This 177-nucleotide RNA was probed chemically with DMS and 2A3. The reactions ran in a buffer of 150 mM KOAc, 10 mM MgCl2 and 150 mM bicine (pH 8.5), at 24 C. The DMS profile rests on 9,779 reads.
RNA sequence: GGGAACGACUCGAGUAGAGUCGAAAAAUCAAAUCGGAUCCGGGCAGCGCGCCCAAACCAACAGGCGAUCCGUCAGUCGAUGUGAUCGCGUGGGCACACAACGAGACGUCAACUGGCGUCGCGGUAAUAGUCAUCAAAAUUUCGAUUUUGAUGACUAAAAAGAAACAACAACAACAAC
Reactivity to DMS in 0.01 (KOAc 150mM, MgCl2 10mM, bicine 150mM(pH8.5), 24C), signal-to-noise 8, nucleotides 027 to 126: a090u010c070a050a080a090u010c100g000g010a080u000c090c070g010g010g020c060a110g030c120g020c140g000c010c010c020a030a080a120c120c080a100a110c130a110g010g020c010g010a010u000c020c010g000u000c020a130g020u000c200g000a020u000g010u000g000a010u000c000g040c060g020u000g000g000g020c080a080c100a060c100a110a080c020g000a050g000a030c010g010u000c010a190a120c240u000g010g010c010g000u000c010g010c020g000g000u000a070a120
Reactivity to 2A3 in 0.01 (KOAc 150mM, MgCl2 10mM, bicine 150mM(pH8.5), 24C), signal-to-noise 5, nucleotides 027 to 126: a000u070c030a040a040a040u110c060g040g000a050u030c070c050g000g020g000c050a090g110c050g030c020g000c100c030c000a030a010a030c040c020a050a070c030a050g190g000c010g000a000u010c020c030g000u000c010a050g200u140c090g020a010u020g150u220g020a020u000c000g000c020g020u030g000g020g030c070a020c010a000c010a150a090c030g010a020g000a030c010g010u010c030a260a190c300u250g010g000c010g010u010c010g000c010g000g010u040a090a090